[RMDB]
RNA sequence: GGGAACGACUCGAGUAGAGUCGAAAAGUGCUCAUCUUACCUGGGGUGUCCAGGCAGGAGAAAUAGCUUGACUGGCUAUAGCUGGAGUUAUAAAAUAGUCUCAGAUCACCCCUUUUUGCCUAGAAGGAUCAUUCCAUCCGUUCGCGGAUGGAAUGAUAAAAGAAACAACAACAACAAC
Reactivity to DMS in 0.01 (KOAc 150mM, MgCl2 10mM, bicine 150mM(pH8.5), 24C), signal-to-noise 1, nucleotides 027 to 126: g010u000g010c050u010c060a150u000c000u010u000a090c010c000u000g010g000g000g010u010g010u000c000c030a020g000g000c030a000g020g010a040g000a100a080a040u020a060g020c000u000u000g010a100c060u000g000g010c020u000a050u010a060g010c090u000g000g000a120g010u000u000a150u010a030a060a040a130u010a080g010u000c000u000c100a030g000a100u010c080a060c060c040c030c040u000u000u000u010u000g010c000c040u010a100g010a100a080g000g020
Reactivity to 2A3 in 0.01 (KOAc 150mM, MgCl2 10mM, bicine 150mM(pH8.5), 24C), signal-to-noise 1, nucleotides 027 to 126: g080u100g020c020u000c000a150u020c050u050u040a020c000c000u030g000g070g000g140u210g200u100c000c000a030g000g000c000a030g090g030a020g000a030a120a100u110a020g070c000u040u030g100a080c040u030g020g020c020u040a010u050a150g030c000u060g080g010a020g030u110u050a110u220a170a190a080a010u060a030g100u070c000u040c040a050g040a050u150c080a110c000c000c000c000u070u090u040u040u170g070c030c010u050a030g040a160a060g110g010
Chemical mapping of a 177-nucleotide RNA with DMS and 2A3.
For 2A3, 689 sequencing reads were counted.
Source: RMDB library OK2TST, as collected in RNAgym.